Source: RMDB library TTRINS, as collected in RNAgym. An RNA of 177 nucleotides, treated with DMS and read out base by base. Reactivities are given for positions 27 through 126. DMS adducts were read by reverse transcription with MarathonRT. For DMS, 552 sequencing reads were counted.

RNA sequence: GGGAACGACUCGAGUAGAGUCGAAAAGAUAUGGAAUAGCUACCCACCCUGCAAGAGCGUUGAAAGGGUAGUCCUUCGGAAACGAAGGACUACCCUGGAGCUCGACCAGGAGGCUAUUCCUAAGUCACCUUACGAUAGUGUUCGCACUAUCGUAAGGAAAAGAAACAACAACAACAAC
Reactivity to DMS in 0.01 (KOAc 150mM, MgCl2 10mM, bicine 150mM(pH8.5), 24C), signal-to-noise 1, nucleotides 027 to 126: g000a060u000a280u000g000g010a030a000u000a000g010c000u000a190c000c070c000a300c060c030c030u050g000c000a010a290g010a010g060c000g000u000u010g060a190a290a010g000g030g030u010a000g030u030c000c000u020u020c000g000g010a140a030a220c000g020a000a010g040g070a000c000u000a000c030c000c050u000g000g000a090g000c010u000c030g000a300c300c040a030g000g060a000g000g000c000u000a030u000u000c000c000u000a020a060g000u000c130a300